[RMDB]
RNA sequence: GGGAACGACUCGAGUAGAGUCGAAAAUUAAAAGUAAUGGCUACAUUAUUGCCGACUUCACGGCGCCCGCGGUGCUCGGUCUUGAGCUGCUCUGUGGUCGUGAACCAGAUACAACCGUGGCCGUUCACCUGUAGCGCUAGUUCGCUAGCGCUACAGGAAAAGAAACAACAACAACAAC
Reactivity to DMS in 0.01 (KOAc 150mM, MgCl2 10mM, bicine 150mM(pH8.5), 24C), signal-to-noise 1, nucleotides 027 to 126: u000u070a060a210a050a010g000u000a050a010u010g000g000c040u040a000c060a050u000u000a160u000u000g000c060c000g000a300c300u000u000c000a070c000g000g000c040g000c020c020c000g010c300g000g000u000g000c060u000c030g000g030u090c070u060u120g000a010g010c070u030g000c040u000c060u040g000u020g000g000u000c060g060u000g000a040a110c020c000a170g000a090u000a030c120a000a110c300c050g000u000g000g040c010c040g020u000u010c100a200
Reactivity to 2A3 in 0.01 (KOAc 150mM, MgCl2 10mM, bicine 150mM(pH8.5), 24C), signal-to-noise 3, nucleotides 027 to 126: u060u040a010a020a000a040g080u160a090a030u060g020g000c030u040a020c080a150u070u170a180u220u180g020c060c030g010a020c000u030u020c060a010c030g030g000c020g060c000c000c010g010c070g080g110u040g000c040u000c060g150g150u040c060u120u300g020a010g000c010u110g000c000u000c050u110g120u160g090g050u050c000g030u020g000a000a000c040c000a030g020a030u140a190c100a020a000c080c050g000u000g020g040c000c000g020u020u030c060a050
Source: RMDB library OK1LIB, as collected in RNAgym. Structure probing data (DMS and 2A3) for a 177-nucleotide construct. The reactions ran in a buffer of 150 mM KOAc, 10 mM MgCl2 and 150 mM bicine (pH 8.5), at 24 C. For 2A3, 1,129 sequencing reads were counted. The DMS profile rests on 1,001 reads. For DMS the reverse transcriptase was MarathonRT. For 2A3 the reverse transcriptase was SuperScript II with manganese.